RNA sequence: GGGAACGACUCGAGUAGAGUCGAAAACCUUGGUCCUUCGGGACCAAGGAAACCCGAAGACAUACAGACUGUGGGCGGCGAGACAAUCCACAUGAGUCGCUAAAAGCGUCUGGUUCGCCAGACGCAAUCUUAUCCCAAGGUUCGCCUUGGGAUAAGAAAAAGAAACAACAACAACAAC
Reactivity to DMS in 0.01 (KOAc 150mM, MgCl2 10mM, bicine 150mM(pH8.5), 24C), signal-to-noise 2, nucleotides 027 to 126: c010c000u000u000g000g000u000c020c000u000u010c210g030g010g000a000c010c000a000a000g010g000a010a040a110c020c000c000g010a120a100g000a050c070a080u000a120c160a150g000a160c130u030g020u000g000g000g020c300g000g000c030g010a070g020a140c080a080a100u000c020c020a040c070a040u000g030a120g000u000c030g010c070u030a060a070a060a150g010c000g000u010c000u000g000g000u000u000c200g000c000c000a020g020a000c000g000c010a020a010
Reactivity to 2A3 in 0.01 (KOAc 150mM, MgCl2 10mM, bicine 150mM(pH8.5), 24C), signal-to-noise 2, nucleotides 027 to 126: c000c000u010u000g000g000u030c000c010u040u050c230g100g000g000a010c000c000a010a010g000g000a040a030a010c010c000c010g020a040a020g070a030c040a010u230a030c040a050g140a040c040u060g010u040g040g030g000c040g050g050c070g060a040g040a080c040a030a030u020c020c010a020c000a030u120g050a010g040u030c020g020c080u080a050a020a060a120g000c010g000u010c010u030g000g070u020u050c220g010c070c000a000g000a020c000g000c000a000a010

Structure probing data (DMS and 2A3) for a 177-nucleotide construct. High 2A3 reactivity points to a flexible backbone, as in loops and unpaired stretches. For DMS the reverse transcriptase was MarathonRT. The RNA was probed in 150 mM KOAc, 10 mM MgCl2 and 150 mM bicine (pH 8.5) at 24 C.